Description: Chemical mapping of a 177-nucleotide RNA with DMS and 2A3. For 2A3, 5,208 sequencing reads were counted. DMS adducts were read by reverse transcription with MarathonRT. 2A3 adducts were read by reverse transcription with SuperScript II with manganese.
RNA sequence: GGGAACGACUCGAGUAGAGUCGAAAAGAAGACGAACCAUCGGCUGCCGUGUUCUUUUUCCUCUUGGAGGUUGGAGUCCCCUGGGCGCCCCCACACGGCUAGACGCCUCGGCUGGUUCGCGACGCAGCCUACCAAUCAACUUCGGUUGAUUGGUAGGAAAAGAAACAACAACAACAAC
Reactivity to DMS in 0.01 (KOAc 150mM, MgCl2 10mM, bicine 150mM(pH8.5), 24C), signal-to-noise 3, nucleotides 027 to 126: g000a060a060g000a080c020g010a010a040c030c010a090u000c100g000g010c020u020g000c020c000g020u020g000u000u000c040u030u010u040u000u000c030c000u000c070u000u040g040g000a050g030g000u020u000g010g000a160g020u000c010c020c020c120u010g000g020g010c050g000c040c010c000c020c030a100c030a040c030g010g010c020u020a070g020a100c150g000c080c030u010c090g010g000c110u000g010g010u000u000c010g020c060g000a060c100g050c120a140g000
Reactivity to 2A3 in 0.01 (KOAc 150mM, MgCl2 10mM, bicine 150mM(pH8.5), 24C), signal-to-noise 5, nucleotides 027 to 126: g060a020a010g100a040c010g010a020a030c010c000a050u100c110g040g020c020u040g020c010c000g020u010g060u030u100c070u040u080u020u030u030c010c010u060c050u070u130g110g040a090g000g050u080u100g030g020a050g070u050c000c010c000c020u070g000g010g020c020g040c000c000c000c000c000a010c000a010c010g020g010c010u050a060g080a150c070g030c010c010u100c070g070g000c040u010g000g000u020u010c010g010c010g010a040c040g010c050a040g020